[RMDB]
RNA sequence: GGGAACGACUCGAGUAGAGUCGAAAAGAUAUGGAUAGCUUUGAUCUCGGAGGUACAUCGAUCUCGGAAACGAGGGAGUACGCCGAGGGAGCUAUCCUAAGUCAAAACUGCGUCUUCGGACGCAGAACUAUUUAAUGGGCUUCGGCCCAUUAAAUAGAAAAGAAACAACAACAACAAC
Reactivity to 2A3 in 0.01 (KOAc 150mM, MgCl2 10mM, bicine 150mM(pH8.5), 24C), signal-to-noise 1, nucleotides 027 to 126: g020a030u060a010u150g000g000a000u000a000g010c010u300u210u130g080a140u060c000u000c000g020g020a100g020g270u000a010c050a220u210c170g090a150u010c030u020c000g000g060a080a060a040c000g010a000g000g040g000a000g010u000a010c010g020c050c010g000a010g000g000g000a000g000c000u020a000u000c000c000u010a020a020g000u020c010a000a020a100a120c000u000g010c030g020u000c010u040u060c250g140g010a000c000g000c000a000g000a000a000
Reactivity to DMS in 0.01 (KOAc 150mM, MgCl2 10mM, bicine 150mM(pH8.5), 24C), signal-to-noise 3, nucleotides 027 to 126: g010a050u000a300u000g010g000a000u010a010g000c010u010u000u000g010a060u020c000u000c000g000g000a070g010g000u000a000c000a180u000c150g020a100u010c000u010c000g000g010a090a100a200c000g010a020g000g010g010a050g010u000a000c000g020c000c000g000a010g020g010g000a010g000c000u000a000u010c000c000u000a010a040g000u000c030a090a070a100a180c000u000g020c000g000u010c010u000u000c200g010g000a020c000g000c000a000g000a050a150

Conditions: 150 mM KOAc, 10 mM MgCl2 and 150 mM bicine (pH 8.5), 24 C. The record gives the reactivity of an RNA of 177 nucleotides to 2A3 and DMS. 2A3 adducts were read by reverse transcription with SuperScript II with manganese. The 2A3 profile rests on 3,001 reads. For DMS the reverse transcriptase was MarathonRT. Values cover nucleotides 27 to 126.